[RMDB]
RNA sequence: GGGAACGACUCGAGUAGAGUCGAAAAGCGGCCGAAACCUGCCCAGUGUUGGUACCUGAAAGCUCUUUUCAAGGAGAAGAAGGGCCAAUAAACGGCGGGGGUAACUAUGACCCUCUCAAGGUAGCGUAAUCGCCUAACACUUCGGUGUUAGGCGAUUAAAAGAAACAACAACAACAAC
Reactivity to 2A3 in 0.01 (KOAc 150mM, MgCl2 10mM, bicine 150mM(pH8.5), 24C), signal-to-noise 2, nucleotides 027 to 126: g010c000g000g030c010c010g000a060a040a050c000c000u060g020c040c040c040a120g000u070g000u000u010g030g030u080a300c000c000u020g040a160a110a000g010c020u000c070u060u080u180u130c190a170a100g010g000a000g030a080a000g000a000a020g010g000g000c030c000a000a000u000a000a020a000c000g000g010c000g000g010g000g000g000u000a070a050c050u040a020u300g040a070c000c000c020u000c000u030c050a000a140g020g020u000a020g050c000g050u050